[RMDB]
RNA sequence: GGGAACGACUCGAGUAGAGUCGAAAAUUACCUGAUAGGCCGUGUCGGGCAGAACCAGUUGAUCAAUCUUCAUCGCAGGAUACGGCUUUCCAAAGAGGCUAAUAAAGAAGACAAUAAUCUGCGGUGAGAUCAGGUGAGUAUUCGUACUCACCUGAUCAAAAGAAACAACAACAACAAC
Reactivity to DMS in 0.01 (KOAc 150mM, MgCl2 10mM, bicine 150mM(pH8.5), 24C), signal-to-noise 2, nucleotides 027 to 126: u000u000a120c030c000u010g020a100u020a130g000g000c030c030g030u000g010u010c010g040g030g010c060a030g000a080a230c100c040a090g030u010u000g060a110u040c110a070a100u000c030u010u000c050a030u010c010g010c010a020g000g000a100u000a120c160g000g000c010u000u010u000c020c210a110a140a210g010a080g010g000c030u030a110a070u000a070a090a050g010a060a050g000a130c120a050a090u030a070a040u000c020u010g000c010g010g000u030g010a060